[RMDB]
RNA sequence: GGGAACGACUCGAGUAGAGUCGAAAAAUUGAGCAACUGAGCGUUGCAAUGAAAACACAAAGGAUUUUUAUACAUUCUGUCGAACUCGCACCCGAAUUCCGUUGACCACAUGGAACUGGUCGCCUGGACCUACUGGGUCGUUCGCGACCCAGUAGGUAAAAGAAACAACAACAACAAC
Reactivity to 2A3 in 0.01 (KOAc 150mM, MgCl2 10mM, bicine 150mM(pH8.5), 24C), signal-to-noise 2, nucleotides 027 to 126: a010u180u150g030a010g000c000a000a000c000u110g070a010g180c090g010u030u000g020c030a000a080u140g020a000a050a090a050c120a000c070a020a100a080g040g020a060u020u000u000u070u300a120u100a030c100a050u110u080c030u110g080u080c020g000a010a070c020u100c080g030c000a120c090c030c000g060a110a050u040u000c000c010g040u030u100g040a080c000c000a030c040a060u110g160g000a070a090c000u020g000g000u000c000g020c000c000u040g000g060
Reactivity to DMS in 0.01 (KOAc 150mM, MgCl2 10mM, bicine 150mM(pH8.5), 24C), signal-to-noise 1, nucleotides 027 to 126: a100u000u040g060a220g000c040a000a000c040u000g010a260g010c070g000u010u000g020c000a030a040u000g000a090a050a120a010c120a110c130a060a080a090g000g000a130u010u010u010u010u000a100u000a070c090a080u020u000c060u000g000u000c000g000a010a040c060u010c080g070c040a020c000c000c000g000a090a140u000u000c000c020g020u050u000g040a190c000c050a110c010a120u040g000g000a070a080c040u040g020g000u000c000g000c110c060u000g000g000

Chemical mapping of a 177-nucleotide RNA with 2A3 and DMS. It was measured as part of the RMDB library OK1LIB. DMS adducts were read by reverse transcription with MarathonRT.